[RMDB]
RNA sequence: GGGAACGACUCGAGUAGAGUCGAAAAGUUCGCAUGGUGCACUAUUGUGUUAUUAGUAACUAAGUAAGCUUACAAUCGAAAAUGUUUCACCAUAAAAGGGUAAAAUGGUGUAAGACAGUCUGAUACUUUACGGCUUCACGUUUCGACGUGAAGCCAACGCAACACUAAGCUUCGGCUUAGUGUUGCGAAAAGAAACAACAACAACAAC
Reactivity to 2A3 in 0.01 (KOAc 150mM, MgCl2 10mM, bicine 150mM(pH8.5), 24C), signal-to-noise 1, nucleotides 027 to 156: g100u050u080c060g000c070a060u050g090g000u050g020c000a000c030u070a100u100u130g000u030g030u070u000a030u000u010a050g120u050a080a010c010u010a100a070g100u000a070a000g080c020u040u140a050c040a060a080u060c030g100a030a030a030a030u010g010u000u020u020c000a000c020c000a000u070a050a160a030a000g080g040g000u140a020a020a020a020u010g040g000u020g010u040a010a010g070a010c000a000g090u060c080u080g050a070u030a180c010u070u040u030a090c120g000g000c000u000u030c000a000c000g000u000u070u070c260g090a040c000g000u000g000a000a000g000c010c000a030a000

Overview
The record gives the reactivity of an RNA of 207 nucleotides to 2A3. Reactivities are given for positions 27 through 156.